[RMDB]
This 177-nucleotide RNA was probed chemically with 2A3 and DMS. Values are in units of 0.01, from 0 to 300, in steps of 10. For 2A3 the reverse transcriptase was SuperScript II with manganese. The DMS profile rests on 1,430 reads.
RNA sequence: GGGAACGACUCGAGUAGAGUCGAAAAUACUUUAUGUCCUGCGAGGUGUCUUGCAGGCCGUCAUGCAGGCCACACUGACGGUAACGUUGCAGGUCGUCUUGCAGGGCUUCUCGCAAGACGGAUUAAACACAUUGAAUGUCUUCGGACAUUCAAUGUGAAAAGAAACAACAACAACAAC
Reactivity to 2A3 in 0.01 (KOAc 150mM, MgCl2 10mM, bicine 150mM(pH8.5), 24C), signal-to-noise 2, nucleotides 027 to 126: u070a020c050u140u210u110a150u200g020u000c000c000u000g000c000g010a040g000g010u010g000u010c000u050u000g000c010a000g010g050c010c010g000u000c000a000u080g010c000a030g080g050c050c000a030c020a030c080u090g050a030c030g020g040u090a220a010c140g280u200u050g000c000a010g030g000u000c010g010u020c000u000u010g010c000a000g000g000g000c010u000u000c000u000c010g020c030a030a040g080a030c040g060g020a100u130u200a010a090a020
Reactivity to DMS in 0.01 (KOAc 150mM, MgCl2 10mM, bicine 150mM(pH8.5), 24C), signal-to-noise 2, nucleotides 027 to 126: u000a080c170u020u000u010a080u010g010u010c000c010u000g010c000g000a020g010g000u000g010u000c000u000u010g000c000a070g000g000c040c020g000u000c010a020u010g010c050a050g020g000c030c060a070c090a210c180u000g020a050c070g000g000u010a060a200c170g000u010u000g010c000a010g010g020u000c000g010u000c000u020u000g020c010a010g000g010g010c030u000u000c000u000c010g010c140a090a040g010a040c070g000g000a180u020u000a130a080a170